The data come from the RNA Mapping Database (RMDB), libraries RFM100 and RFMREP. Structure probing data (DMS and 2A3) for a 177-nucleotide construct. The reactions ran in a buffer of 150 mM KOAc, 10 mM MgCl2 and 150 mM bicine (pH 8.5), at 24 C. DMS adducts were read by reverse transcription with MarathonRT. For 2A3 the reverse transcriptase was SuperScript II with manganese.

RNA sequence: GGGAACGACUCGAGUAGAGUCGAAAACUAUUCAAACAAUGCAAUUCCUAAAUGGUAGAAGAUGUUGCGAAGCCAGUACCGCCUGGCGAUGAAAUGGCGGACGAAUUAGCAACAAAGGGUAAGGUUUACGUUGUACAUUAUUCGUAAUGUACAACGUAAAAGAAACAACAACAACAAC
Reactivity to DMS in 0.01 (KOAc 150mM, MgCl2 10mM, bicine 150mM(pH8.5), 24C), signal-to-noise 4, nucleotides 027 to 126: c080u010a090u020u000c110a090a090a120c180a070a080u030g020c050a050a150u010u010c010c000u000a070a080a200u010g000g010u000a050g000a090a060g000a080u010g000u000u000g000c010g010a160a090g000c030c010a060g010u000a060c010c000g000c060c000u010g030g030c080g000a050u020g010a030a070a060u000g000g000c000g000g000a070c030g000a030a010u010u010a280g040c010a000a000c000a050a090a100g010g030g010u010a070a080g020g010u010u000u000
Reactivity to 2A3 in 0.01 (KOAc 150mM, MgCl2 10mM, bicine 150mM(pH8.5), 24C), signal-to-noise 6, nucleotides 027 to 126: c030u090a090u120u190c110a090a140a120c040a090a080u140g080c030a040a100u070u090c010c000u110a200a160a140u120g040g010u070a020g030a150a020g080a160u100g000u010u000g000c010g030a060a020g040c000c020a030g020u100a300c000c010g010c000c010u040g060g030c080g030a030u090g020a010a060a020u100g000g000c000g010g000a000c000g000a000a020u110u050a050g000c000a000a000c000a000a050a030g130g010g030u110a060a080g050g010u010u010u000